Background: This 177-nucleotide RNA was probed chemically with DMS and 2A3.
[RMDB]
RNA sequence: GGGAACGACUCGAGUAGAGUCGAAAAGAAAGAACAGGAAAAAAUGUUACCAUUACUAUGGUUCAACCUGGAACUAUGAGAUCAAAUAGCCUACGCCGCGUCAUUAGUAAUGGUUCGGUGGUAUUGACAUAUCAUGCUACUUCGGUAGCAUGAUAUGAAAAGAAACAACAACAACAAC
Reactivity to DMS in 0.01 (KOAc 150mM, MgCl2 10mM, bicine 150mM(pH8.5), 24C), signal-to-noise 5, nucleotides 027 to 126: g000a080a130a070g000a110a120c000a040g000g030a000a020a060a060a120a090u030g010u050u010a010c000c000a020u000u030a120c220u020a060u000g000g010u010u010c030a090a110c040c010u010g000g000a110a100c070u000a090u020g000a110g010a100u010c140a070a060a060u010a070g000c010c010u000a060c030g000c040c040g000c060g020u010c020a010u020u000a120g000u020a110a030u010g010g000u000u000c020g000g050u010g000g010u040a060u010u000g010a240
Reactivity to 2A3 in 0.01 (KOAc 150mM, MgCl2 10mM, bicine 150mM(pH8.5), 24C), signal-to-noise 8, nucleotides 027 to 126: g070a020a090a010g050a050a020c050a030g020g100a030a060a030a050a040a110u180g030u120u040a060c000c000a010u060u110a100c160u250a030u040g010g000u020u040c020a060a050c010c000u020g020g020a050a030c010u040a090u210g110a080g020a090u110c040a060a050a100u080a080g030c010c020u030a030c020g010c010c010g010c030g020u010c000a000u010u090a080g120u200a080a050u010g030g000u010u030c010g040g000u070g060g000u070a160u040u110g010a000

The RNA was probed in 150 mM KOAc, 10 mM MgCl2 and 150 mM bicine (pH 8.5) at 24 C. For 2A3 the reverse transcriptase was SuperScript II with manganese.